[RMDB]
RNA sequence: GGGAACGACUCGAGUAGAGUCGAAAACUCAAAUUGAAAUCGAAGGAGAAAUAACAUUUGAUAAAUGUUUUUUUCCCCUUUUUGAUUUAGGGUUCUUUCUUUCAUCCCAUUUCCCUCGAUGACGGUCGGUUGCCAUAAGUUUCGACUUAUGGCAACCAAAAGAAACAACAACAACAAC
Reactivity to 2A3 in 0.01 (KOAc 150mM, MgCl2 10mM, bicine 150mM(pH8.5), 24C), signal-to-noise 3, nucleotides 027 to 126: c000u010c030a010a030a110u090u170g030a030a030a020u060c050g010a040a000g000g000a010g000a010a000a000u100a000a010c000a010u010u040u080g200a130u280a140a010a030u070g040u040u000u000u040u000u020u020c060c010c000c030u050u020u010u040u210g020a020u050u060u070a060g030g000g000u050u050c010u030u030u050c010u010u030u050c040a080u020c010c010c000a010u060u030u020c000c010c000u000c040g040a050u080g050a010c030g040g030u080c030
Notes: The record gives the reactivity of an RNA of 177 nucleotides to 2A3. The RNA was probed in 150 mM KOAc, 10 mM MgCl2 and 150 mM bicine (pH 8.5) at 24 C. 2A3 adducts were read by reverse transcription with SuperScript II with manganese. Source: RMDB library RFM100, as collected in RNAgym.